[RMDB]
RNA sequence: GGGAACGACUCGAGUAGAGUCGAAAAUAAGCCAUGACGCUCACGGAAUUCUUCGCCGAGAUCGGCAACGACCACCUGCGCUUCCAGCUCCUCGAACAGUCCAUGACGGACAUCCGCGCCAUGCGGCGGGGAACGCUCGUCUCGUUCGCAACCGACGGUCAUCUCGGGAAUUCGUUCCCGAGAUGACAAAAGAAACAACAACAACAAC
Reactivity to 2A3 in 0.01 (KOAc 150mM, MgCl2 10mM, bicine 150mM(pH8.5), 24C), signal-to-noise 1, nucleotides 027 to 156: u180a030a020g060c000c010a060u090g080a010c060g020c010u020c020a020c090g060g050a120a070u190u000c050u050u140c060g070c030c010g030a070g010a180u150c000g020g000c010a040a040c060g080a070c000c060a020c060c050u050g010c050g010c000u110u090c060c020a040g020c010u040c000c000u010c010g000a080a030c030a050g000u000c010c000a060u150g070a130c100g010g020a010c000a020u060c010c000g010c000g030c180c010a150u300g080c010g010g000c000g000g000g000g000a060a050c060g000c000u000c000g020u000c020u000c020g010u080u000c020g020c110a110a110c020c040g130a060c120g040
Notes: Chemical mapping of a 207-nucleotide RNA with 2A3. For 2A3, 799 sequencing reads were counted. 2A3 is a SHAPE reagent: it acylates the 2'-hydroxyl of flexible nucleotides of all four kinds. It was measured as part of the RMDB library OK3TST. The RNA was probed in 150 mM KOAc, 10 mM MgCl2 and 150 mM bicine (pH 8.5) at 24 C. 2A3 adducts were read by reverse transcription with SuperScript II with manganese. Reactivities are given for positions 27 through 156.